[RMDB]
RNA sequence: GGGAACGACUCGAGUAGAGUCGAAAAGAAGCGCGUCCCUGCCCUGGGUCCAGGCCUUUCUCAGGAAGCCCUGUGCUCAGGAGGCCAUCGUUGAAGUCAGCUUGUAGGGGGUGGGCAGGUGCUUCCAAUACGUUCGUCUUUUCGAAGACGAACGUAUAAAAGAAACAACAACAACAAC
Reactivity to DMS in 0.01 (KOAc 150mM, MgCl2 10mM, bicine 150mM(pH8.5), 24C), signal-to-noise 2, nucleotides 027 to 126: g020a070a060g010c030g030c060g010u000c080c000c020u000g000c060c020c000u010g000g000g000u000c190c020a020g040g000c240c000u010u010u000c010u020c300a180g020g000a000a030g020c300c020c030u000g010u000g000c010u000c010a010g000g020a040g010g000c010c020a040u000c110g000u010u010g020a130a190g020u000c110a130g000c070u000u000g010u000a140g030g000g000g000g000u000g010g010g000c040a060g030g000u000g000c010u000u010c000c110a080

Structure probing data (DMS) for a 177-nucleotide construct. Conditions: 150 mM KOAc, 10 mM MgCl2 and 150 mM bicine (pH 8.5), 24 C.